Chemical mapping of a 177-nucleotide RNA with 2A3 and DMS.

[RMDB]
RNA sequence: GGGAACGACUCGAGUAGAGUCGAAAAGAUAUGGAGGAAUCAUCGAUCUACCGUAACAUCAUUUCGGAAACGAAAUGUGGGUAGGGAGAUUACUCCUAAGUCAAACGCGUGCCUUCGGGCACGCGAACUUGCUAUUUAGCUUCGGCUAAAUAGCAAGAAAAGAAACAACAACAACAAC
Reactivity to 2A3 in 0.01 (KOAc 150mM, MgCl2 10mM, bicine 150mM(pH8.5), 24C), signal-to-noise 2, nucleotides 027 to 126: g000a030u090a060u270g000g030a030g000g120a110a150u120c050a070u200c080g040a080u000c010u010a010c000c020g170u170a050a130c020a220u300c010a010u020u000u000c020g020g030a090a130a070c010g010a000a000a010u010g010u000g040g030g000u000a000g000g000g000a030g000a000u010u030a010c000u030c000c030u020a200a010g090u050c030a010a050a210c040g000c020g070u000g010c010c000u060u130c280g070g020g000c050a000c000g000c010g000a020a010
Reactivity to DMS in 0.01 (KOAc 150mM, MgCl2 10mM, bicine 150mM(pH8.5), 24C), signal-to-noise 3, nucleotides 027 to 126: g000a040u000a300u010g000g010a010g000g010a060a030u000c030a180u000c100g010a200u010c000u000a000c020c010g010u020a040a150c160a030u010c000a010u000u010u000c010g000g010a060a090a200c000g000a010a000a000u000g000u000g000g010g010u000a000g010g000g000a160g010a010u000u000a070c000u000c000c010u000a040a080g000u000c030a070a140a190c020g000c010g000u010g010c000c000u000u000c190g030g010g010c020a000c010g000c000g000a010a070